About this RNA
The data come from the RNA Mapping Database (RMDB), library TTRDES. Chemical mapping of a 177-nucleotide RNA with DMS. For DMS, 1,070 sequencing reads were counted. For DMS the reverse transcriptase was MarathonRT. Conditions: 150 mM KOAc, 10 mM MgCl2 and 150 mM bicine (pH 8.5), 24 C.
RNA sequence: GGGAACGACUCGAGUAGAGUCGAAAAAAAAGAUAUGGACAACAGACAUGAGCGGCUAGGGAGCAGGCUCGGAAACGAGCCUGAACUACUCCCUAAUCGCUCAACAGCUGUUGUCCUAAGUCAAAAACGAAUAUUUUAACUUCGGUUAAAAUAUUCGAAAAGAAACAACAACAACAAC
Reactivity to DMS in 0.01 (KOAc 150mM, MgCl2 10mM, bicine 150mM(pH8.5), 24C), signal-to-noise 1, nucleotides 027 to 126: a090a040a060a100g000a020u000a300u000g000g000a010c000a000a000c000a030g000a040c080a170u000g000a000g000c000g020g000c170u000a010g000g000g000a000g020c000a010g020g020c000u000c010g000g010a090a080a130c000g040a010g010c000c000u000g000a000a040c080u000a300c010u000c000c010c000u000a000a000u000c000g020c020u000c000a010a020c300a130g020c030u000g000u000u000g020u000c000c000u030a000a060g000u000c000a100a050a110a110a170